[RMDB]
Chemical mapping of a 207-nucleotide RNA with 2A3 and DMS. Source: RMDB library OK3TST, as collected in RNAgym. The reactions ran in a buffer of 150 mM KOAc, 10 mM MgCl2 and 150 mM bicine (pH 8.5), at 24 C.
RNA sequence: GGGAACGACUCGAGUAGAGUCGAAAAGUAAUAGAUAACUGGAUGCAGCGAAGGCGUCAUCGCAUAUCCAGUACGAAUGGUACCUGUAAAUAAAAUAUGGCGCCUAGUACAAGUACCAACAGAAGGAUAAGCGAUGGUGAUGUCAAUCACAUUUGCAAGUGCUACUUUUAUUCGUAAAAGUAGCACUAAAAGAAACAACAACAACAAC
Reactivity to 2A3 in 0.01 (KOAc 150mM, MgCl2 10mM, bicine 150mM(pH8.5), 24C), signal-to-noise 5, nucleotides 027 to 156: g020u030a010a110u070a110g100a060u120a130a050c010u020g010g000a020u040g080c150a070g000c190g020a020a010g010g000c000g000u000c000a010u000c000g000c020a010u010a000u160c010c000a000g030u020a000c010g050a060a120u100g010g000u000a010c020c010u000g020u060a070a130a160u170a070a110a080a030u170a070u030g000g000c000g000c000c010u020a020g010u010a000c010a000a020g000u000a030c000c010a020a040c050a040g170a130a040g090g030a040u060a120a040g000c030g020a000u050g080g080u050g020a040u040g080u160c050a030a030u020c020a040c020a080u080u080u180g030c050a080
Reactivity to DMS in 0.01 (KOAc 150mM, MgCl2 10mM, bicine 150mM(pH8.5), 24C), signal-to-noise 3, nucleotides 027 to 156: g030u020a080a120u000a100g010a060u000a130a110c020u000g020g020a050u000g010c120a080g020c000g030a050a080g030g020c040g010u000c010a120u010c010g000c010a150u000a060u000c030c020a100g000u010a070c080g030a100a110u000g010g000u000a050c010c010u000g020u000a020a090a180u000a070a080a120a140u000a110u010g000g020c000g000c010c060u000a080g030u010a040c020a030a040g000u010a000c010c020a000a170c110a140g000a080a100g010g000a090u000a040a150g020c030g000a070u000g010g020u000g020a030u000g030u000c140a090a120u000c050a050c020a100u000u020u030g030c050a120
The DMS profile rests on 4,597 reads. For 2A3 the reverse transcriptase was SuperScript II with manganese.